[RMDB]
RNA sequence: GGGAACGACUCGAGUAGAGUCGAAAAAGGCCAGGCCGUGGCCAGAGCAGAUACGUAGGCCCAUGAAAUUGAUGAACUGAGAGUUGCUUCCAGUCCUGAGCGCACCAUCUGGAAUUCCAGUCUGAGGGUGUCUAAUUAUCUUCGGAUAAUUAGACACAAAAGAAACAACAACAACAAC
Reactivity to DMS in 0.01 (KOAc 150mM, MgCl2 10mM, bicine 150mM(pH8.5), 24C), signal-to-noise 3, nucleotides 027 to 126: a110g000g020c030c020a090g010g030c080c080g040u000g000g010c020c030a070g000a080g030c020a050g000a070u000a050c140g010u000a100g010g030c010c020c030a090u010g010a050a090a100u010u000g000a090u000g000a080a090c050u000g000a150g010a070g010u000u000g000c080u010u000c010c040a080g010u010c030c030u010g000a080g000c070g010c050a040c060c040a050u010c020u000g010g000a140a090u010u010c020c020a050g010u000c060u010g010a080g000g010
Reactivity to 2A3 in 0.01 (KOAc 150mM, MgCl2 10mM, bicine 150mM(pH8.5), 24C), signal-to-noise 2, nucleotides 027 to 126: a000g060g000c010c000a020g010g060c030c040g160u050g030g000c010c010a000g010a010g000c040a010g010a120u120a120c030g020u050a050g010g010c000c020c030a030u140g070a040a090a060u160u120g040a040u090g030a130a010c010u040g020a020g010a010g210u070u100g010c020u080u000c010c010a020g040u020c010c020u060g010a010g020c030g020c000a020c020c010a020u070c000u030g060g040a050a050u160u050c010c010a030g050u000c050u070g070a080g060g120